[RMDB]
Background:
An RNA of 177 nucleotides, treated with DMS and 2A3 and read out base by base. 2A3 adducts were read by reverse transcription with SuperScript II with manganese.
RNA sequence: GGGAACGACUCGAGUAGAGUCGAAAAGACAACAAGCCAACAGGCAGGCAGUGUGAAGCCACCAUGUUAUGGAUUGUUCUGGAGGAGCCCAUUGCUAUAUGGAUGCCAGAGGACACAGUAUGCAUCCACCUCUAUUCCGGUUCGCCGGAAUAGAGGUAAAAGAAACAACAACAACAAC
Reactivity to DMS in 0.01 (KOAc 150mM, MgCl2 10mM, bicine 150mM(pH8.5), 24C), signal-to-noise 4, nucleotides 027 to 126: g020a060c170a100a050c080a050a060g000c000c010a030a090c070a060g010g010c080a130g010g010c000a060g050u010g020u000g030a180a100g020c020c000a290c010c000a140u000g020u000u000a070u040g000g000a070u060u000g010u000u020c030u000g000g000a150g020g010a090g000c010c020c000a090u040u010g030c110u020a050u020a110u020g000g040a020u000g000c070c090a070g000a100g000g000a150c140a050c030a040g000u010a110u020g010c020a030u000c010c030
Reactivity to 2A3 in 0.01 (KOAc 150mM, MgCl2 10mM, bicine 150mM(pH8.5), 24C), signal-to-noise 5, nucleotides 027 to 126: g070a010c080a090a010c020a080a020g000c000c010a030a020c010a060g030g060c050a090g070g000c050a060g040u080g070u070g300a130a020g020c010c000a010c000c020a140u020g020u120u140a130u120g030g010a020u020u030g030u060u050c060u080g050g090a080g020g090a040g040c020c020c000a040u050u100g100c090u120a060u020a080u300g010g000a030u010g060c090c080a070g030a100g180g090a040c070a000c000a220g150u150a080u140g000c010a000u020c000c020